[RMDB]
RNA sequence: GGGAACGACUCGAGUAGAGUCGAAAACCAUUGCGCAUACACAUCAAGAGAUAAUGAUUUAGCUAUACCUUUACAUUUAGAUAAUUUCUCUUUAUUAGCUAUUAUAAAACCAAAUCCAGGUACUCCUAUUUAAAUGCUAGUUCGCUAGCAUUUAAAUAAAAGAAACAACAACAACAAC
Reactivity to 2A3 in 0.01 (KOAc 150mM, MgCl2 10mM, bicine 150mM(pH8.5), 24C), signal-to-noise 8, nucleotides 027 to 126: c010c000a020u030u190g020c080g000c010a040u070a110c060a020c000a090u070c040a040a020g040a010g040a050u090a160a060u130g120a090u020u060u150a030g000c020u040a050u100a230c040c020u130u140u090a060c040a070u090u120u060a050g020a070u120a070a090u080u150u010c010u000c000u010u090u040a090u050u030a070g010c010u010a040u150u060a120u190a060a100a040a010c010c030a100a020a010u080c030c020a010g020g020u030a050c020u030c010c000u000
Reactivity to DMS in 0.01 (KOAc 150mM, MgCl2 10mM, bicine 150mM(pH8.5), 24C), signal-to-noise 2, nucleotides 027 to 126: c020c000a090u020u000g020c050g000c050a060u020a020c050a130c080a030u000c020a030a030g000a010g000a050u030a070a030u020g010a030u000u010u060a040g020c010u010a020u010a080c080c060u020u060u050a070c060a100u000u000u000a050g010a060u000a040a000u030u000u000c000u000c000u050u010u070a050u000u000a060g000c020u000a020u010u000a040u080a040a030a090a050c090c040a030a110a030u010c040c050a000g020g010u010a040c050u000c020c040u000
An RNA of 177 nucleotides, treated with 2A3 and DMS and read out base by base.
The DMS profile rests on 1,912 reads.
For 2A3, 5,193 sequencing reads were counted.
2A3 adducts were read by reverse transcription with SuperScript II with manganese.
DMS adducts were read by reverse transcription with MarathonRT.
Conditions: 150 mM KOAc, 10 mM MgCl2 and 150 mM bicine (pH 8.5), 24 C.